[RMDB]
RNA sequence: GGGAACGACUCGAGUAGAGUCGAAAACUCAUAAUGUCCCGAUCUAUGAUCUGACAGGAUAUUAAUGUUCUCAAUACCAGAUCUUUUCCCACCGGACACACUAAGGGAUUCACACAAACGUGAGUACCUCUUCAUGUGCAUUCGUGCACAUGAAGAGAAAAGAAACAACAACAACAAC
Reactivity to 2A3 in 0.01 (KOAc 150mM, MgCl2 10mM, bicine 150mM(pH8.5), 24C), signal-to-noise 9, nucleotides 027 to 126: c030u030c020a070u100a150a050u090g030u020c030c020c020g030a050u000c040u150a110u200g050a040u000c020u040g040a080c060a110g060g030a060u030a040u110u140a170a150u180g050u100u030c070u010c030a070a080u080a160c040c010a020g010a050u030c000u050u040u040u030c020c000c010a030c000c010g030g010a020c020a010c010a010c080u080a070a120g060g030g020a040u050u050c020a020c010a010c050a080a180a070c090g010u000g000a010g030u060a120c000
Reactivity to DMS in 0.01 (KOAc 150mM, MgCl2 10mM, bicine 150mM(pH8.5), 24C), signal-to-noise 3, nucleotides 027 to 126: c030u020c070a090u050a020a030u010g040u010c020c000c060g000a070u020c070u010a070u000g020a020u030c020u030g040a140c060a080g000g060a000u000a030u000u010a090a080u040g000u000u000c010u030c040a160a040u020a080c180c030a000g000a010u030c000u010u010u000u020c030c020c050a110c140c040g040g010a020c030a050c040a010c090u020a080a150g000g000g000a000u000u010c010a010c000a270c260a050a060a090c250g000u010g000a050g000u000a080c100
Structure probing data (2A3 and DMS) for a 177-nucleotide construct.
For DMS the reverse transcriptase was MarathonRT.
The RNA was probed in 150 mM KOAc, 10 mM MgCl2 and 150 mM bicine (pH 8.5) at 24 C.
DMS (dimethyl sulfate) methylates the pairing face of unpaired adenines and cytosines.
The data come from the RNA Mapping Database (RMDB), library OK1LIB.